[RMDB]
RNA sequence: GGGAACGACUCGAGUAGAGUCGAAAACAUCCACUGCUACGGCAGUGGAUGAACGAGGUAGGUACGCCUACCUCGAAAGGUAGAUGUAACCAUAUACAUUAAACGUCCAUGGUACGCCAUGGACGAACAUCCGCACUGGAUUCGUCCAGUGCGGAUGAAAAGAAACAACAACAACAAC
Reactivity to 2A3 in 0.01 (KOAc 150mM, MgCl2 10mM, bicine 150mM(pH8.5), 24C), signal-to-noise 2, nucleotides 027 to 126: c000a000u010c000c000a000c000u000g000c000u040a060c170g160g000c010a000g010u010g000g000a010u000g000a010a010c000g000a000g000g000u010a010g050g020u020a020c200g060c060c000u020a020c000c000u000c010g000a050a000a000g030g010u070a060g020a050u010g020u010a020a040c030c060a110u050a010u030a110c020a000u040u130a090a170a030c030g000u000c010c010a010u000g000g020u030a040c240g070c020c010a000u010g020g000a000c000g010a000a010
Reactivity to DMS in 0.01 (KOAc 150mM, MgCl2 10mM, bicine 150mM(pH8.5), 24C), signal-to-noise 1, nucleotides 027 to 126: c000a030u000c000c000a030c030u000g010c000u010a110c300g040g030c010a020g030u010g000g000a000u000g000a010a100c030g000a010g020g000u000a000g000g020u010a060c270g040c000c000u010a000c000c010u020c010g010a010a050a100g000g010u020a100g030a010u000g010u000a010a060c000c010a130u000a070u000a010c000a000u010u000a050a110a180c000g000u000c000c000a000u000g010g020u000a130c300g000c000c000a050u000g000g000a030c000g000a040a060